[RMDB]
RNA sequence: GGGAACGACUCGAGUAGAGUCGAAAAGGUCAGCACCGAAACCGGUGUGCGUCCUGGUGGCCGCCCGUUCGUGAACGUCGUCACUGACAACCCGGGUCAGGAGUUUGGCACGGCACUGCACCAGCGGCACCGGAUCUUGGGCCGGGCGGGUGAGGGCUCAAAUUCCUUAGUUCGCUAAGGAAUUUGAAAAAGAAACAACAACAACAAC
Reactivity to DMS in 0.01 (KOAc 150mM, MgCl2 10mM, bicine 150mM(pH8.5), 24C), signal-to-noise 2, nucleotides 027 to 156: g020g030u000c040a210g010c050a080c010c010g010a070a160a120c060c000g010g050u000g020u000g010c100g020u010c010c030u000g040g040u010g000g030c030c020g000c030c030c100g000u020u000c070g030u010g020a090a100c080g040u010c020g030u000c050a180c050u000g000a030c020a040a070c020c050c040g020g000g000u000c070a080g020g010a160g030u000u000u000g060g000c070a110c010g010g010c030a090c040u020g000c010a070c060c020a050g020c030g000g030c000a050c010c010g000g010a030u000c040u000u000g020g000g020c060c050g010g000g000c100g010g000g020u010g000a100g000g000g010c040
Reactivity to 2A3 in 0.01 (KOAc 150mM, MgCl2 10mM, bicine 150mM(pH8.5), 24C), signal-to-noise 3, nucleotides 027 to 156: g060g000u050c040a020g020c040a040c020c020g080a140a090a070c040c000g000g000u080g030u100g150c040g020u090c030c040u050g010g010u010g080g100c020c030g040c010c010c000g020u060u070c060g010u040g080a190a130c020g040u060c040g060u080c100a020c180u040g000a010c030a090a130c050c050c040g240g050g000u000c020a020g000g070a120g030u060u160u110g060g000c040a010c020g010g010c030a030c140u160g030c040a020c020c010a020g020c000g000g030c010a010c010c010g000g000a010u040c020u080u120g040g000g020c100c030g030g010g080c130g030g020g000u110g070a050g010g010g020c010